[RMDB]
RNA sequence: GGGAACGACUCGAGUAGAGUCGAAAAGAUAUGGACUUAGACAAACCUACCCACCUCCAAUAUCGGAAACGAUAUGGAGAGGGUUCGAGUCCUAAGUCAAAGCCGCGACCGUUCGCGGUCGCGGCAACAGUAUCUAUGUCUUCGGACAUAGAUACUGAAAAGAAACAACAACAACAAC
Reactivity to DMS in 0.01 (KOAc 150mM, MgCl2 10mM, bicine 150mM(pH8.5), 24C), signal-to-noise 2, nucleotides 027 to 126: g010a110u010a130u000g000g020a000c000u000u000a090g000a100c110a050a180a120c020c020u000a090c000c000c000a300c170c010u000c000c000a080a080u000a010u000c000g010g010a180a080a130c000g010a010u020a000u010g030g010a030g020a300g000g030g040u020u010c030g000a110g000u000c110c060u010a040a010g010u010c000a120a090a160g000c060c050g080c000g170a030c030c000g070u010u020c280g000c070g110g020u020c000g030c060g000g010c030a020a010
Reactivity to 2A3 in 0.01 (KOAc 150mM, MgCl2 10mM, bicine 150mM(pH8.5), 24C), signal-to-noise 2, nucleotides 027 to 126: g090a050u150a190u300g030g000a010c020u020u040a070g040a090c150a080a160a070c030c010u040a120c040c040c020a160c090c010u000c010c020a210a280u000a020u030c000g000g010a060a080a030c010g000a000u010a000u020g030g010a000g000a020g000g000g010u030u100c010g010a040g040u020c010c040u020a070a020g030u070c060a130a070a010g070c010c020g020c000g030a050c050c050g080u160u130c300g040c070g250g020u010c000g000c090g000g000c000a000a010